[RMDB]
RNA sequence: GGGAACGACUCGAGUAGAGUCGAAAAACUCGUAUUUCAUCCACUUCAGAUCACUUGGACUCAGUGGGAAGUCUCCUUAUUCAUCCAAUGCGGUUGGGCAUGUGUUUAACCUGAUUCACUUUGUGGGCUUAUAUCCCGACUUCGGUCGGGAUAUAAGAAAAGAAACAACAACAACAAC
Reactivity to 2A3 in 0.01 (KOAc 150mM, MgCl2 10mM, bicine 150mM(pH8.5), 24C), signal-to-noise 1, nucleotides 027 to 126: a000c110u090c070g040u100a270u000u180u040c010a050u050c000c040a040c050u090u090c080a020g000a300u060c000a010c110u000u040g040g000a040c030u050c060a050g040u130g040g030g020a020a020g090u030c060u140c050c000u030u140a060u100u240c020a030u090c040c010a050a080u100g050c080g080g040u050u000g010g100g030c060a050u140g060u020g030u160u060u100a040a060c000c000u050g040a050u090u000c020a050c150u090u080u200g050u110g000g020g020
Reactivity to DMS in 0.01 (KOAc 150mM, MgCl2 10mM, bicine 150mM(pH8.5), 24C), signal-to-noise 2, nucleotides 027 to 126: a080c020u000c070g030u000a100u010u000u000c050a100u000c050c020a050c020u010u000c100a110g030a130u010c020a070c120u000u000g010g000a080c040u010c070a070g040u000g020g020g010a070a120g020u020c020u000c040c020u000u000a090u000u010c100a120u010c030c050a060a080u000g000c070g010g000u020u010g010g000g000c060a050u000g010u000g010u000u000u000a090a070c060c030u000g010a070u020u010c040a060c120u000u020u000g020u000g000g010g000